RNA sequence: GGGAACGACUCGAGUAGAGUCGAAAAGGGAUUCCAACUGGGACGAGGUGAUGCGGAGGGUUUUGAGCCUGACGACCGGCAACGCACACUUUGGAAAUCUGCCGCGCGCCACGCGAUUUGACACCAUCCUGGAAGCGGUGGUACCGUCGCGUACCGAACAGUUGAUGAGAUUCGUCUCAUCAACUGUAAAAGAAACAACAACAACAAC
Reactivity to 2A3 in 0.01 (KOAc 150mM, MgCl2 10mM, bicine 150mM(pH8.5), 24C), signal-to-noise 4, nucleotides 027 to 156: g080g010g020a050u060u050c020c020a090a050c120u120g000g020g050a020c030g030a060g040g020u070g020a130u070g030c030g010g030a070g030g010g010u040u070u090u150g040a020g040c000c010u090g020a090c060g020a060c050c010g040g000c060a060a040c010g050c030a030c000a040c040u070u100u100g040g030a030a050a020u030c020u050g010c020c000g030c010g000c020g000c020c010a010c020g010c010g010a020u020u030u170g040a050c060a010c040c010a010u060c010c020u090g100g060a120a020g040c110g000g000u020g010g000u030a060c040c030g040u030c010g000c000g000u030a080c040c000g000a040
Reactivity to DMS in 0.01 (KOAc 150mM, MgCl2 10mM, bicine 150mM(pH8.5), 24C), signal-to-noise 1, nucleotides 027 to 156: g010g000g000a120u000u000c040c030a060a170c090u000g000g010g040a080c020g000a150g000g010u000g000a050u020g010c070g010g010a190g000g030g020u010u000u000u010g030a080g020c000c020u000g000a110c060g060a090c060c040g030g010c010a070a050c090g010c040a130c010a070c090u000u000u000g020g000a090a060a080u010c020u000g000c020c010g000c010g030c070g030c000c050a020c000g040c000g000a050u000u000u010g040a080c060a030c050c000a040u000c020c040u010g050g000a110a100g030c110g020g020u000g010g050u000a030c000c010g030u000c040g020c040g020u000a070c010c000g020a130
Structure probing data (2A3 and DMS) for a 207-nucleotide construct. For DMS, 2,694 sequencing reads were counted. Reactivities are given for positions 27 through 156. The RNA was probed in 150 mM KOAc, 10 mM MgCl2 and 150 mM bicine (pH 8.5) at 24 C.